[RMDB]
RNA sequence: GGGAACGACUCGAGUAGAGUCGAAAAGAGUACAUAUGCCCAGCCUUACUGGUUCGGCUGGAUGCUUCGUGCAAAUGCUAUGUACGCCUACGUAUAUGUGCGUAGAUGCCUAUAUUUUCUCUCCUGAGAAAAUAUAGAUGCAUACAAAGGGCAUGCACCAUUACGGCAUGUUCGCAUGCCGUAAUGGAAAAGAAACAACAACAACAAC
Reactivity to DMS in 0.01 (KOAc 150mM, MgCl2 10mM, bicine 150mM(pH8.5), 24C), signal-to-noise 2, nucleotides 027 to 156: g000a120g030u010a080c060a100u000a050u000g010c070c010c000a050g000c020c020u000u000a190c130u000g000g030u000u000c110g010g030c020u000g000g000a170u000g000c000u000u000c130g100u000g020c010a060a120a090u010g040c030u000a060u000g010u000a020c020g010c040c020u000a040c030g000u000a130u010a080u000g010u010g000c000g020u000a020g000a090u000g010c050c000u020a010u000a000u010u000u000u000c000u000c010u010c290c260u000g020a000g000a020a010a000a000u000a010u000a020g000a060u000g060c000a060u000a070c030a060a050a090g030g010g000c010a070u000g010c070a280
Reactivity to 2A3 in 0.01 (KOAc 150mM, MgCl2 10mM, bicine 150mM(pH8.5), 24C), signal-to-noise 4, nucleotides 027 to 156: g070a020g000u010a000c010a020u080a040u220g010c000c000c000a000g000c010c000u150u220a130c110u220g210g010u150u100c040g000g000c000u000g000g020a040u080g000c020u070u180c120g120u180g010c010a040a020a160u200g000c020u010a000u030g010u000a010c030g040c000c000u010a020c030g090u100a060u020a040u260g100u030g060c010g020u010a040g010a080u030g000c000c000u000a000u000a000u010u000u000u000c010u000c010u060c020c220u220g000a000g000a010a000a010a000u000a000u000a000g020a010u100g000c000a000u020a080c040a060a120a040g070g020g000c030a010u050g010c030a030